[RMDB]
RNA sequence: GGGAACGACUCGAGUAGAGUCGAAAAGAUAUGGACCCUUGGAUUUAGGGAGUAGUGUUUCGGAAACGAAACCUACGAAGAACUUGUCAGGGUCCUAAGUCAAAAGCAAACAGUUCGCUGUUUGCAACCUUGAUAGUCACUUCGGUGACUAUCAAGGAAAAGAAACAACAACAACAAC
Reactivity to 2A3 in 0.01 (KOAc 150mM, MgCl2 10mM, bicine 150mM(pH8.5), 24C), signal-to-noise 2, nucleotides 027 to 126: g030a020u050a030u100g000g000a000c000c030c000u020u230g180g020a100u300u290u300a140g070g060g080a120g060u010a000g000u030g050u230u010u000c030g000g040a000a040a000c010g000a010a020a000c010c000u000a010c030g000a090a050g070a060a160c070u080u070g020u030c050a020g010g000g000u000c010c000u020a010a000g030u000c040a000a010a100a200g000c010a010a010a020c010a010g020u150u200c300g060c200u000g000u000u000u030g010c000a020a030
Reactivity to DMS in 0.01 (KOAc 150mM, MgCl2 10mM, bicine 150mM(pH8.5), 24C), signal-to-noise 1, nucleotides 027 to 126: g010a020u000a220u000g000g000a000c010c000c000u000u000g030g010a000u000u000u010a010g010g010g000a210g000u000a000g000u000g030u000u000u000c000g000g010a070a040a120c000g010a010a000a000c010c000u000a010c000g000a140a120g010a090a180c030u000u010g000u000c020a010g000g000g030u000c010c010u010a010a030g000u000c020a100a050a100a140g000c000a010a000a000c000a000g000u010u010c280g000c000u000g000u010u000u000g000c000a060a070